Conditions: 150 mM KOAc, 10 mM MgCl2 and 150 mM bicine (pH 8.5), 24 C. This 177-nucleotide RNA was probed chemically with 2A3 and DMS.

RNA sequence: GGGAACGACUCGAGUAGAGUCGAAAAGGAGCUUCUCGAUCUCCAGCACGAAUACUUGGACGAGAUAGUUUCCAGUCUCCAUGUUCACAUGGACGAACACAACUGCCUUGAGGUCGUCGUUGUGAAGCGUCAGGUCCACUUUCGAGUGGACCUGACGAAAAGAAACAACAACAACAAC
Reactivity to 2A3 in 0.01 (KOAc 150mM, MgCl2 10mM, bicine 150mM(pH8.5), 24C), signal-to-noise 1, nucleotides 027 to 126: g010g000a020g000c020u020u000c010u000c000g140a300u030c060u030c080c010a020g020c040a040c180g250a180a120u200a130c080u060u120g030g000a010c000g000a040g000a050u140a010g010u100u300u010c000c010a010g060u000c000u000c000c060a000u130g130u080u070c040a040c020a110u040g260g000a020c020g060a150a010c030a000c010a100a110c010u060g060c010c020u080u060g080a070g070g030u000c030g040u050c060g060u060u000g020u020g030a020a050g010
Reactivity to DMS in 0.01 (KOAc 150mM, MgCl2 10mM, bicine 150mM(pH8.5), 24C), signal-to-noise 1, nucleotides 027 to 126: g000g000a040g010c000u000u000c040u000c000g000a200u010c160u000c010c210a110g020c120a130c080g000a210a110u000a090c080u000u020g000g010a060c040g000a010g030a070u050a020g000u000u030u000c000c030a120g020u000c030u020c000c080a060u110g010u000u010c050a000c000a020u000g000g100a010c030g040a060a010c040a030c030a060a080c090u020g060c060c120u030u000g000a130g000g000u000c020g030u000c040g000u000u000g010u010g030a060a070g020

For 2A3, 854 sequencing reads were counted.